The record gives the reactivity of an RNA of 207 nucleotides to 2A3.
[RMDB]
RNA sequence: GGGAACGACUCGAGUAGAGUCGAAAAGCGAAAAUCGGACGGUGGCUGCAAGUCGCAUCGCAAAACCGCGGCAAGUGGAGUUAGCGAGAGGAGGCUGGGUUUUGGCUUCCUUAAGCAAUCGGUCACUAUAAGAGGAUUCGCUUCGGCGAAUCCUCAAUCGAUGGAUUAGGUUCGCCUAAUCCAUCGAAAAAGAAACAACAACAACAAC
Reactivity to 2A3 in 0.01 (KOAc 150mM, MgCl2 10mM, bicine 150mM(pH8.5), 24C), signal-to-noise 2, nucleotides 027 to 156: g050c010g030a040a060a000a070u170c040g080g040a030c100g000g020u000g000g040c020u060g000c040a080a040g030u030c000g030c040a040u070c020g030c060a050a050a030a030c010c060g030c010g090g000c120a090a060g020u040g030g030a070g000u060u110a010g010c000g010a020g000a000g000g000a000g010g000c010u070g070g230g000u050u140u190u300g020g000c000u010u010c010c000u000u030a060a020g010c000a000a000u030c000g010g010u040c000a000c040u070a030u070a300a070g000a000g000g040a000u010u000c010g000c000u010u000c090g040g010c000g000a000a000u000c000c000u010c000a020a010

Values cover nucleotides 27 to 156. For 2A3 the reverse transcriptase was SuperScript II with manganese. The data come from the RNA Mapping Database (RMDB), library M2RFPK. The RNA was probed in 150 mM KOAc, 10 mM MgCl2 and 150 mM bicine (pH 8.5) at 24 C.